An RNA of 177 nucleotides, treated with DMS and 2A3 and read out base by base.
The RNA was probed in 150 mM KOAc, 10 mM MgCl2 and 150 mM bicine (pH 8.5) at 24 C.
For 2A3 the reverse transcriptase was SuperScript II with manganese.
The DMS profile rests on 2,136 reads.
DMS adducts were read by reverse transcription with MarathonRT.
RNA sequence: GGGAACGACUCGAGUAGAGUCGAAAACAGACCAAGUUCGCUUGGUCUGAAAGAAAGCGCAAAGCACCAGGGAGGGAAGGUGCGGGCCGCAACCACCCAUAAAAAGUACGAUCUUCGGAUCGUACAACAAACGGAUGUUGUUCGCAACAUCCGUUUGAAAAGAAACAACAACAACAAC
Reactivity to DMS in 0.01 (KOAc 150mM, MgCl2 10mM, bicine 150mM(pH8.5), 24C), signal-to-noise 3, nucleotides 027 to 126: c030a010g010a030c000c010a010a010g020u000u010c270g000c010u000u000g010g000u000c010u020g000a030a080a080g000a060a100a170g000c020g020c040a040a030a220g000c020a050c010c000a130g010g010g010a060g010g000g030a210a200g010g000u000g010c000g010g020g050c160c020g020c020a030a140c110c120a110c000c000c010a090u020a020a070a070a120a090g020u000a010c000g000a000u000c000u000u000c210g030g020a000u010c000g000u000a000c010a050a110
Reactivity to 2A3 in 0.01 (KOAc 150mM, MgCl2 10mM, bicine 150mM(pH8.5), 24C), signal-to-noise 4, nucleotides 027 to 126: c010a000g000a000c000c000a000a000g010u020u080c130g010c180u000u000g000g000u000c000u000g000a010a000a000g060a020a080a000g000c020g010c030a070a040a020g000c010a010c010c010a040g040g080g070a160g020g030g050a070a060g010g000u020g010c000g010g020g000c130c000g000c010a010a010c030c040a050c000c010c000a040u240a060a120a000a010a010g000u000a000c000g000a010u000c000u030u050c160g060g010a000u000c000g000u000a000c000a000a010